Notes:
Chemical mapping of a 177-nucleotide RNA with DMS and 2A3. Values cover nucleotides 27 to 126. Source: RMDB libraries RFM100 and RFMREP, as collected in RNAgym. The reactions ran in a buffer of 150 mM KOAc, 10 mM MgCl2 and 150 mM bicine (pH 8.5), at 24 C.
RNA sequence: GGGAACGACUCGAGUAGAGUCGAAAACACCGCGUGAGUACUGGCUGUUUGUGUCUCCGCCAUUGCCAAUCAGCUGUCAUUAACCACGCAAUACCGUACAGAGGUGCUAAAUUACCGUGAAAACCACACGGAUAGGUGUUUUCGAACACCUAUCCGUAAAAGAAACAACAACAACAAC
Reactivity to DMS in 0.01 (KOAc 150mM, MgCl2 10mM, bicine 150mM(pH8.5), 24C), signal-to-noise 3, nucleotides 027 to 126: c080a100c070c010g000c020g020u000g000a100g040u010a060c090u010g000g000c050u000g010u010u010u000g030u000g030u020c080u020c030c050g050c090c060a070u000u020g010c050c060a030a040u010c040a030g000c020u010g010u000c100a070u020u030a070a130c100c030a030c080g000c040a150a090u000a060c040c020g040u000a090c120a070g010a050g010g010u000g000c050u040a040a080a070u030u000a100c050c000g000u000g000a080a140a070a200c110c060a080c040
Reactivity to 2A3 in 0.01 (KOAc 150mM, MgCl2 10mM, bicine 150mM(pH8.5), 24C), signal-to-noise 5, nucleotides 027 to 126: c070a010c000c020g000c010g050u030g030a170g030u100a090c060u080g030g000c010u020g060u060u010u030g120u050g030u050c010u010c020c040g030c030c030a140u100u150g010c010c010a000a020u050c020a040g010c000u030g040u070c010a050u020u150a050a030c020c000a000c020g000c000a020a000u080a030c040c030g020u050a060c040a050g060a080g040g020u020g000c030u070a030a090a180u130u080a080c030c030g030u020g070a050a040a020a100c050c030a040c010